This 177-nucleotide RNA was probed chemically with DMS.
RNA sequence: GGGAACGACUCGAGUAGAGUCGAAAAGAUAUGGAAAUCCCAUAGACAUGAAUGAUGUUCCCGUUUGAUAGAUCGGAAACGAUCUAUCAAACGGGAACAUAUUCAACAGCUAUGGAUUUCCUAAGUCCAAUAAUCUCUGGUUCGCCAGAGAUUAUUGAAAAGAAACAACAACAACAAC
Reactivity to DMS in 0.01 (KOAc 150mM, MgCl2 10mM, bicine 150mM(pH8.5), 24C), signal-to-noise 2, nucleotides 027 to 126: g000a120u000a300u010g000g000a030a010a010u000c140c100c050a010u010a000g010a090c090a270u010g000a020a000u010g010a020u000g030u000u010c000c000c000g000u000u000u000g000a050u000a010g040a010u010c000g000g000a120a100a270c010g010a020u000c000u000a000u000c000a010a010a010c020g000g010g020a000a000c010a010u000a010u000u000c000a010a080c300a120g020c010u000a010u000g000g000a040u000u000u000c000c000u000a020a120g000u000c030
Background
The RNA was probed in 150 mM KOAc, 10 mM MgCl2 and 150 mM bicine (pH 8.5) at 24 C. High DMS reactivity at an A or C suggests that its Watson-Crick edge is free.